[RMDB]
RNA sequence: GGGAACGACUCGAGUAGAGUCGAAAAUAUAGUAUGGAGGAGGCUGGAAGUUAGAAGGAGAAUGGAAGGAAGGAGAAGAUGUCCAGGUAUUGGCACUGGAGCCUGGAAAAAAUCCAAGAGCCGUAAAGUAUACCGUUUGUUUCGACAAACGGUAUACAAAAGAAACAACAACAACAAC
Reactivity to DMS in 0.01 (KOAc 150mM, MgCl2 10mM, bicine 150mM(pH8.5), 24C), signal-to-noise 1, nucleotides 027 to 126: u010a070u020a010g010u000a150u000g020g010a090g020g010a010g010g010c050u010g010g010a050a050g000u010u010a090g030a130a060g040g000a050g010a070a100u010g020g000a090a110g000g010a090a030g000g000a070g000a090a030g000a040u000g020u020c040c020a010g010g050u000a090u000u000g000g030c040a060c080u000g000g030a110g010c010c020u000g000g000a000a000a090a030a020a050u000c020c030a040a120g000a120g090c050c040g030u000a050a010a080
Chemical mapping of a 177-nucleotide RNA with DMS. DMS adducts were read by reverse transcription with MarathonRT. The DMS profile rests on 723 reads.